[RMDB]
RNA sequence: GGGAACGACUCGAGUAGAGUCGAAAAUUCUAAUCUGUGGGAUGGGAUAUGAGGGCUUUCUGGCUGGAACUUCUCACACCCAUGGAGUGCCUAUUCCCUUACUUGGACAACUGCUCACUCCAUUGGACAGUCCAAUUGAUUUCGAUCAAUUGGACUGAAAAGAAACAACAACAACAAC
Reactivity to DMS in 0.01 (KOAc 150mM, MgCl2 10mM, bicine 150mM(pH8.5), 24C), signal-to-noise 4, nucleotides 027 to 126: u030u030c070u020a080a110u020c020u010g010u000g010g000g000a300u010g000g000g000a040u000a120u030g010a290g000g000g000c060u000u040u050c110u020g000g030c020u020g030g010a070a040c080u000u000c010u000c010a050c130a070c020c000c000a040u000g000g000a010g020u020g000c160c050u000a100u000u010c010c020c000u020u020a090c100u010u030g000g000a060c100a090a080c030u000g010c070u000c010a060c040u010c020c010a060u010u010g020g010a300
Reactivity to 2A3 in 0.01 (KOAc 150mM, MgCl2 10mM, bicine 150mM(pH8.5), 24C), signal-to-noise 8, nucleotides 027 to 126: u060u020c010u070a080a100u020c030u060g030u030g000g000g030a050u040g010g050g030a020u040a070u250g060a160g030g060g000c050u150u280u120c140u210g080g010c020u050g030g050a050a040c010u050u030c000u010c010a010c010a030c000c010c000a000u010g010g000a030g010u030g030c000c000u050a100u050u040c010c000c000u030u080a120c050u050u100g040g020a020c020a140a070c110u090g010c010u020c010a020c010u010c010c010a060u020u080g040g020a020
The data come from the RNA Mapping Database (RMDB), library OK1LIB. An RNA of 177 nucleotides, treated with DMS and 2A3 and read out base by base. DMS adducts were read by reverse transcription with MarathonRT. For 2A3, 7,613 sequencing reads were counted. The reactions ran in a buffer of 150 mM KOAc, 10 mM MgCl2 and 150 mM bicine (pH 8.5), at 24 C.